[RMDB]
RNA sequence: GGGAACGACUCGAGUAGAGUCGAAAACAGACACAGUGUGUCUCUCAGUGUGACUGUGUGUGUGAGUGUGUGUGACUCUCAGAGUGAGUCACAGACUCUGUGAGACAGUCAGUGUCAGUCUGUGUCACCAGGCUUGUCCAUUCGUGGACAAGCCUGGAAAAGAAACAACAACAACAAC
Reactivity to 2A3 in 0.01 (KOAc 150mM, MgCl2 10mM, bicine 150mM(pH8.5), 24C), signal-to-noise 2, nucleotides 027 to 126: c050a030g000a020c010a020c010a020g050u050g030u000g000u220c010u050c010u030c120a130g080u080g060u040g210a050c020u020g030u030g010u000g060u070g050u020g240a040g030u130g010u050g040u050g030u050g100a000c000u020c010u010c140a040g060a040g260u130g000a000g030u050c010a010c000a030g000a000c030u000c030u010g120u060g030a080g010a000c000a020g000u070c000a010g060u030g070u150c030a000g090u050c010u030g050u000g050u020c010a010
Reactivity to DMS in 0.01 (KOAc 150mM, MgCl2 10mM, bicine 150mM(pH8.5), 24C), signal-to-noise 1, nucleotides 027 to 126: c030a120g000a020c000a040c010a000g020u010g010u000g000u000c030u000c010u000c090a080g010u010g010u020g000a010c030u010g010u000g050u010g010u000g000u000g020a060g040u010g000u000g010u000g010u010g000a010c000u000c000u000c130a160g020a180g050u020g010a040g000u000c000a020c000a030g010a040c030u010c020u000g010u000g020a070g000a050c020a010g010u000c020a060g040u000g000u000c050a150g010u000c030u020g000u010g000u000c030a300